[RMDB]
RNA sequence: GGGAACGACUCGAGUAGAGUCGAAAAUCCUAAGUCUAGGGACCCAUUAAUAUAGACAGUACGGUGGAGCUUUCGGAAACGAAAGCUAUGAAGCCGUACCGAAUUAAUGCUAACCUAGAUAUGGAAAAAUCUCCUAUGCGUUCGCGCAUAGGAGAAAGCACAUUAUACACUUCGGUGUAUAAUGUGCAAAAGAAACAACAACAACAAC
Reactivity to DMS in 0.01 (KOAc 150mM, MgCl2 10mM, bicine 150mM(pH8.5), 24C), signal-to-noise 1, nucleotides 027 to 156: u000c020c020u020a120a200g020u020c000u000a000g000g020g030a150c300c300c000a010u000u000a010a000u000a210u000a180g020a300c200a050g010u000a000c000g000g090u000g010g000a000g040c020u000u010u010c000g000g040a200a090a290c010g000a010a020a010g080c000u000a020u020g020a160a300g030c020c020g050u010a000c020c000g000a130a090u000u000a000a020u000g000c020u000a150a300c000c000u000a010g020a010u000a190u000g010g000a030a220a080a160a180u000c000u000c000c000u010a020u000g020c000g030u020u000c300g000c070g000c000a000u000a020g000g010a020g010a010a040a230
Reactivity to 2A3 in 0.01 (KOAc 150mM, MgCl2 10mM, bicine 150mM(pH8.5), 24C), signal-to-noise 2, nucleotides 027 to 156: u020c000c000u030a150a020g010u000c000u000a000g010g010g020a030c020c000c010a000u000u010a020a030u130a000u090a070g110a090c040a030g000u000a000c000g060g010u030g010g020a010g000c010u000u010u000c020g000g030a030a080a010c000g000a000a000a000g000c000u020a210u010g000a000a000g010c000c010g030u000a000c000c000g020a010a000u000u000a000a000u020g010c020u030a050a040c000c000u000a000g000a010u030a020u000g010g030a000a070a010a070a100u050c010u030c030c000u010a000u000g000c000g060u050u110c300g000c010g000c140a000u000a000g000g000a000g000a020a000a000

The record gives the reactivity of an RNA of 207 nucleotides to DMS and 2A3.
Values cover nucleotides 27 to 156.
The RNA was probed in 150 mM KOAc, 10 mM MgCl2 and 150 mM bicine (pH 8.5) at 24 C.